Structure probing data (DMS and 2A3) for a 177-nucleotide construct.
It was measured as part of the RMDB library OK2TST.
2A3 adducts were read by reverse transcription with SuperScript II with manganese.
The reactions ran in a buffer of 150 mM KOAc, 10 mM MgCl2 and 150 mM bicine (pH 8.5), at 24 C.
For DMS, 2,697 sequencing reads were counted.

RNA sequence: GGGAACGACUCGAGUAGAGUCGAAAACUCAGCUCGGAUCUGAUGAUGAGGCGGCUGCAUCUAAGGCAAUUCGUGCAGCAUACAAUGCUGUAAUGAAGAAGAUUGUCCGUCAUAUGAUCUUGACGGACAGUCCAGGACCAUUCGUGGUCCUGGACUGAAAAGAAACAACAACAACAAC
Reactivity to DMS in 0.01 (KOAc 150mM, MgCl2 10mM, bicine 150mM(pH8.5), 24C), signal-to-noise 3, nucleotides 027 to 126: c030u000c010a230g000c050u000c070g020g010a090u000c040u010g000a130u010g000a040u000g000a110g020g000c060g010g010c020u000g010c060a070u000c090u010a120a100g010g010c070a100a140u000u000c020g030u000g000c010a030g000c000a030u000a110c300a120a140u000g000c010u000g000u000a050a030u000g020a020a050g000a110a090g010a140u010u010g010u000c000c000g000u000c000a020u010a100u000g000a080u010c210u000u000g030a020c010g000g000a020
Reactivity to 2A3 in 0.01 (KOAc 150mM, MgCl2 10mM, bicine 150mM(pH8.5), 24C), signal-to-noise 3, nucleotides 027 to 126: c010u030c030a030g040c050u070c060g100g000a120u000c020u050g060a070u050g000a010u050g000a090g050g000c020g000g000c020u030g010c020a050u000c010u120a070a010g080g000c020a080a140u050u010c010g030u010g000c000a020g000c010a030u100a150c100a070a230u060g000c010u010g010u100a210a260u060g020a030a050g030a060a010g080a090u060u120g010u010c010c000g000u000c020a010u040a070u180g220a160u150c060u050u030g000a010c000g000g020a010